[RMDB]
RNA sequence: GGGAACGACUCGAGUAGAGUCGAAAACUUUUGAACCUUAAGCUUAGAGCACCUAUGGGUGUCUAUGACUUUAAGGUCUCAACACAAGAGUUCAGAUUCAUGACUGCUAACAAUCUAACUGCACCUAAACGUAGCGAGUUCGCUCGCUACAAAAGAAACAACAACAACAAC
Reactivity to 2A3 in 0.01 (KOAc 150mM, MgCl2 10mM, bicine 150mM(pH8.5), 24C), signal-to-noise 9, nucleotides 027 to 129: c010u080u070u020u060g010a000a000c000c000u000u000a000a000g010c010u010u020a000g020a030g050c010a030c010c000u110a230u300g250g000g000u000g020u000c000u000a010u020g150a270c020u050u050u110a000a010g000g000u000c020u000c030a040a050c100a010c040a080a050g040a020g050u040u050c030a000g010a080u060u010c030a030u210g120a060c040u060g040c030u110a130a040c050a020a040u040c010u030a020a050c010u060g010c020a060c040c010u050a070a060a040c070
Reactivity to DMS in 0.01 (KOAc 150mM, MgCl2 10mM, bicine 150mM(pH8.5), 24C), signal-to-noise 4, nucleotides 027 to 129: c060u100u010u050u020g020a040a050c000c010u040u040a000a000g020c020u000u000a010g020a060g030c000a020c000c000u070a080u150g030g020g050u000g060u020c000u020a000u020g050a130c030u000u000u000a030a000g050g000u000c160u000c100a070a090c270a060c200a000a030g000a030g030u080u020c100a070g030a080u000u000c140a150u070g060a050c090u000g060c090u000a010a020c080a000a000u040c070u050a060a050c090u040g030c030a100c080c040u060a060a060a110c100